Chemical mapping of a 207-nucleotide RNA with DMS and 2A3. For 2A3, 6,402 sequencing reads were counted.
RNA sequence: GGGAACGACUCGAGUAGAGUCGAAAAGUCCUAGUUCGCUAGGACAAAAAAGCGUACUACGGAGAGGAUUCUUUGGUACAAUGACGUCCCAAAUAGGAUAAGACAGUACGAAUCUACCCACCUCCGUAUCGCAAAAAGUGUACGUUCGCGUACACAACAACAAGAUCAAGUUCGCUUGAUCUUGUUGAAAAGAAACAACAACAACAAC
Reactivity to DMS in 0.01 (KOAc 150mM, MgCl2 10mM, bicine 150mM(pH8.5), 24C), signal-to-noise 3, nucleotides 027 to 156: g010u020c000c010u000a030g020u000u010c300g020c000u000a000g010g000a030c020a000a060a080a100a070a070g000c020g060u010a060c100u010a030c010g000g010a030g000a300g020g010a070u000u000c020u000u000u010g030g020u000a010c000a130a160u000g020a200c140g010u000c020c000c010a040a120a210u020a050g000g020a020u000a030a160g010a150c030a070g010u000a070c030g010a040a010u000c010u000a010c000c020c000a150c050c030u020c000c000g040u000a000u020c010g040c010a090a050a090a050a060g030u000g000u000a000c000g030u000u000c300g020c030g010u010a000c000a010c000a060a110
Reactivity to 2A3 in 0.01 (KOAc 150mM, MgCl2 10mM, bicine 150mM(pH8.5), 24C), signal-to-noise 5, nucleotides 027 to 156: g000u000c000c000u000a000g000u030u060c130g020c140u010a000g000g010a010c040a000a090a040a000a020a010g040c050g030u090a080c050u010a010c020g010g000a010g000a010g040g010a010u050u000c040u180u190u230g110g010u020a020c080a070a160u150g060a060c090g010u010c020c040c020a060a150a090u220a060g000g010a020u050a120a120g060a070c070a060g010u040a020c030g010a010a010u000c010u040a150c040c020c010a060c010c010u010c000c000g010u020a040u300c010g000c020a030a100a020a000a050g000u000g000u000a000c010g020u040u100c250g000c010g110u010a000c030a000c000a000a030
2A3 adducts were read by reverse transcription with SuperScript II with manganese.
It was measured as part of the RMDB library RNAMAK.
For DMS the reverse transcriptase was MarathonRT.